Chemical mapping of a 177-nucleotide RNA with DMS and 2A3. The data come from the RNA Mapping Database (RMDB), library OK1LIB. 2A3 adducts were read by reverse transcription with SuperScript II with manganese. For 2A3, 19,951 sequencing reads were counted.
RNA sequence: GGGAACGACUCGAGUAGAGUCGAAAACAAGAAAACAAAACAAAAAGAAAAGGACCACUGGACAAGAUUACGUCUUUCGGGACGGCUGUCCGGUCAAGGCCAUACGGACAGCCGGGUCCACUGCCGACGUGUACUUGGACUUCGGUCCAGGUACACGAAAAGAAACAACAACAACAAC
Reactivity to DMS in 0.01 (KOAc 150mM, MgCl2 10mM, bicine 150mM(pH8.5), 24C), signal-to-noise 5, nucleotides 027 to 126: c060a090a100g010a080a100a060a100c210a070a040a090a100c180a050a070a080a100a100g000a050a070a120a070g000g010a030c030c000a120c080u010g000g010a040c060a120a030g000a120u010u040a110c080g000u010c000u000u010u030c120g030g000g010a200c020g000g010c000u010g000u000c000c000g000g010u000c190a040a060g020g030c040c050a090u010a070c010g000g000a000c000a040g000c000c010g000g000g000u000c010c020a060c120u030g000c090c010g010a290
Reactivity to 2A3 in 0.01 (KOAc 150mM, MgCl2 10mM, bicine 150mM(pH8.5), 24C), signal-to-noise 9, nucleotides 027 to 126: c040a030a050g150a080a110a010a020c130a050a110a030a020c080a040a120a070a060a010g190a060a080a020a030g030g000a010c020c010a020c050u060g020g010a010c040a100a040g020a160u160u230a090c080g020u000c000u010u080u080c090g060g010g020a020c000g000g000c000u010g000u000c000c000g000g010u040c040a020a040g070g000c050c010a030u110a110c000g000g000a000c000a000g000c000c000g010g000g000u000c000c000a020c020u060g000c010c020g070a070